[RMDB]
RNA sequence: GGGAACGACUCGAGUAGAGUCGAAAAGAGCGUGGUGAUCUAGUACAGCGGUUGACGCGGGCUCGCCAGCGGAUCACCGACCCGCAGGUCCGUGUGGUGAUCGCCGGGCUGCUCAAACAGGGCAAGAAAACAUGCGGUAGUUCGCUACCGCAUGUUUAAAAGAAACAACAACAACAAC
Reactivity to DMS in 0.01 (KOAc 150mM, MgCl2 10mM, bicine 150mM(pH8.5), 24C), signal-to-noise 3, nucleotides 027 to 126: g010a030g030c010g020u000g040g010u000g000a040u020c010u010a140g000u010a150c090a130g000c080g010g030u000u010g010a120c160g020c050g000g010g020c090u010c230g000c090c040a100g030c030g000g020a050u020c040a110c140c010g020a110c040c000c040g000c070a120g000g000u020c030c010g040u000g020u020g020g000u010g000a090u010c040g000c010c030g000g000g060c020u000g000c030u020c030a070a090a080c050a130g000g000g000c020a150a130g000a140
This 177-nucleotide RNA was probed chemically with DMS.